Chemical mapping of a 177-nucleotide RNA with DMS. The RNA was probed in 150 mM KOAc, 10 mM MgCl2 and 150 mM bicine (pH 8.5) at 24 C. It was measured as part of the RMDB library TTRINS.
RNA sequence: GGGAACGACUCGAGUAGAGUCGAAAAGAUAUGGAUUCGGGGUAGCGCAUAUGCAGCUUUUGACGGAGGAGUAUCGGAAACGAUAUGACUCCGAUAAGCUGGUAUGCGCUACCCCGAAUCCUAAGUCCUAUCUAGGUAUCUUCGGAUACCUAGAUAGAAAAGAAACAACAACAACAAC
Reactivity to DMS in 0.01 (KOAc 150mM, MgCl2 10mM, bicine 150mM(pH8.5), 24C), signal-to-noise 2, nucleotides 027 to 126: g000a130u010a300u000g020g010a020u000u010c020g000g010g030g050u000a000g000c000g000c010a010u010a010u000g010c010a020g000c000u000u000u010u000g020a270c160g010g000a010g030g000a300g010u000a010u000c000g010g000a110a100a220c000g020a030u000a000u000g000a300c000u010c000c020g030a020u000a000a030g020c010u010g010g000u010a000u000g000c010g050c000u000a000c010c000c000c000g000a000a000u000c000c000u010a010a080g000u010c050